The record gives the reactivity of an RNA of 177 nucleotides to 2A3 and DMS.
RNA sequence: GGGAACGACUCGAGUAGAGUCGAAAAAGGGGGACAGAGUUGACCAUGACAGCGAGUGUGGCCAAGGUGACAGCUGCACGCCCGGAGCCAAGCGCGGCGUGGGCUGAAGCCCGGCGGCGGGUACGCCAAGCCUUCAUGCAUUCGUGCAUGAAGGCUUAAAAGAAACAACAACAACAAC
Reactivity to 2A3 in 0.01 (KOAc 150mM, MgCl2 10mM, bicine 150mM(pH8.5), 24C), signal-to-noise 2, nucleotides 027 to 126: a000g100g010g000g000g000a000c000a020g110a010g020u010u030g070a010c010c090a050u090g040a060c030a040g040c020g010a060g030u150g040u120g050g020c000c010a100a020g000g000u030g000a020c000a000g030c000u170g080c000a000c000g000c010c000c040g050g000a070g080c060c080a130a020g100c050g050c110g030g000c000g000u030g020g030g000c020u030g000a020a000g030c000c000c050g000g030c000g000g000c050g010g000g050u050a020c010g030c010c000
Reactivity to DMS in 0.01 (KOAc 150mM, MgCl2 10mM, bicine 150mM(pH8.5), 24C), signal-to-noise 2, nucleotides 027 to 126: a070g020g000g000g010g000a120c080a030g010a140g010u000u030g010a070c050c050a040u020g000a090c090a070g000c100g000a070g000u000g040u000g000g000c030c030a070a190g010g000u000g000a300c050a020g020c000u000g080c000a080c010g000c040c000c000g000g000a060g000c110c100a050a090g010c040g000c230g020g000c000g040u010g010g000g000c000u010g010a080a270g000c020c000c070g000g020c050g000g010c030g010g000g010u020a000c030g000c000c060
For 2A3, 1,031 sequencing reads were counted. Values cover nucleotides 27 to 126. The reactions ran in a buffer of 150 mM KOAc, 10 mM MgCl2 and 150 mM bicine (pH 8.5), at 24 C.